About this RNA:
Structure probing data (DMS) for a 177-nucleotide construct. For DMS, 745 sequencing reads were counted.

[RMDB]
RNA sequence: GGGAACGACUCGAGUAGAGUCGAAAAGAUGGGUGGUAGGACCUUCCAGACCUCAUAAAACUUAGGCUUUAUGAUCUGGGACUCACAGAAGGUUGAGCAAUAAAAGACCUUAGGGAUUAUCUGGUUAAGCAGGACUAUCAUUCGUGAUAGUCCUGCUAAAAGAAACAACAACAACAAC
Reactivity to DMS in 0.01 (KOAc 150mM, MgCl2 10mM, bicine 150mM(pH8.5), 24C), signal-to-noise 1, nucleotides 027 to 126: g050a130u000g030g030g000u050g000g010u010a010g010g000a100c080c100u010u000c000c030a030g000a040c140c230u000c010a000u000a000a010a010a040c000u000u010a160g000g030c060u000u010u000a010u000g000a080u020c010u000g000g010g020a090c270u010c080a030c080a130g000a030a010g040g020u000u030g010a120g010c110a050a140u010a070a030a090a050g000a070c050c040u000u010a050g010g000g010a200u000u000a080u010c050u000g000g010u000u000a100